[RMDB]
RNA sequence: GGGAACGACUCGAGUAGAGUCGAAAACAGUCAUUCGUGACUGCUGAUGAUAUGGAAGCUUUUGACGCUUGUAAGACCGAAGAACUCUUUCGGAAACGAAAGAGGGAGGUCCCAAGAGCGAUAAGCUUCCUAAGUCCAAGAAGCUCUUCGGAGCUAAGAAUCAAAUAGGCUUCGGCCUAUUUGAUUCAAAAGAAACAACAACAACAAC
Reactivity to DMS in 0.01 (KOAc 150mM, MgCl2 10mM, bicine 150mM(pH8.5), 24C), signal-to-noise 1, nucleotides 027 to 156: c000a000g000u000c010a110u000u000c170g020u020g010a050c020u000g000c000u000g030a100u000g000a250u000a170u000g000g000a050a020g010c010u000u040u000u000g020a240c020g040c040u000u010g010u000a250a190g000a050c000c000g000a150a220g000a120a100c000u000c000u000u000u000c000g020g000a110a090a270c030g010a000a060a020g000a030g010g000g020a160g000g020u000c000c010c030a100a300g000a020g000c000g040a160u000a020a050g000c000u000u000c000c010u000a020a110g060u000c020c050a160a130g010a120a100g060c020u010c020u000u030c210g040g000a000g010c000u000a020a090
Reactivity to 2A3 in 0.01 (KOAc 150mM, MgCl2 10mM, bicine 150mM(pH8.5), 24C), signal-to-noise 4, nucleotides 027 to 156: c000a000g010u010c010a030u100u190c220g160u060g000a000c000u010g000c070u070g060a140u050g000a040u100a090u240g020g010a000a000g010c020u070u060u130u210g190a130c000g010c000u030u020g030u090a020a010g000a000c010c000g140a190a020g010a030a010c000u000c000u000u000u000c000g010g030a120a070a050c010g000a000a000a000g000a000g000g010g010a010g000g010u000c010c000c000a070a000g000a000g000c000g000a000u000a010a000g010c010u000u010c000c000u000a000a000g010u000c000c000a050a100g130a090a020g070c000u010c020u070u210c300g070g000a000g010c000u010a040a060
Record summary
The record gives the reactivity of an RNA of 207 nucleotides to DMS and 2A3. The 2A3 profile rests on 2,964 reads.